[RMDB]
RNA sequence: GGGAACGACUCGAGUAGAGUCGAAAACAUGCGCGUAAGAACAGCCGCGUUCAUGCAGAGUCAAGAGCCCUUCUGGUUCGUUGCGUGAAUGUAGAAAUAUACAUCUUGCGACUGAGCGUCGGCUCGGUCUAGGCAUCCGGUUCGCUGGGUGUCUAGAAAAAGAAACAACAACAACAAC
Reactivity to 2A3 in 0.01 (KOAc 150mM, MgCl2 10mM, bicine 150mM(pH8.5), 24C), signal-to-noise 4, nucleotides 027 to 126: c020a010u050g000c030g000c000g030u050a030a010g020a080a020c020a010g060c000c030g000c000g000u000u000c000a000u060g020c000a000g020a020g210u080c070a140a210g000a020g000c000c020c000u030u030c030u040g010g000u000u000c010g030u050u040g010c000g010u010g010a040a000u010g000u030a030g080a060a170a010u190a010u010a030c020a020u000c010u010u060g000c000g020a030c030u070g010a010g010c030g130u130c060g090g000c000u010c010g000g020
Reactivity to DMS in 0.01 (KOAc 150mM, MgCl2 10mM, bicine 150mM(pH8.5), 24C), signal-to-noise 4, nucleotides 027 to 126: c050a080u010g010c100g030c020g010u000a030a050g000a070a100c180a080g000c150c070g000c000g000u000u000c000a000u000g010c000a300g000a300g000u000c300a260a300g000a140g010c030c030c100u030u020c060u010g010g000u000u000c010g010u010u000g000c010g020u000g000a010a010u000g000u000a030g010a060a030a060u020a070u030a040c100a030u000c030u000u010g000c030g000a110c010u000g000a020g000c020g000u020c140g000g000c010u000c010g010g000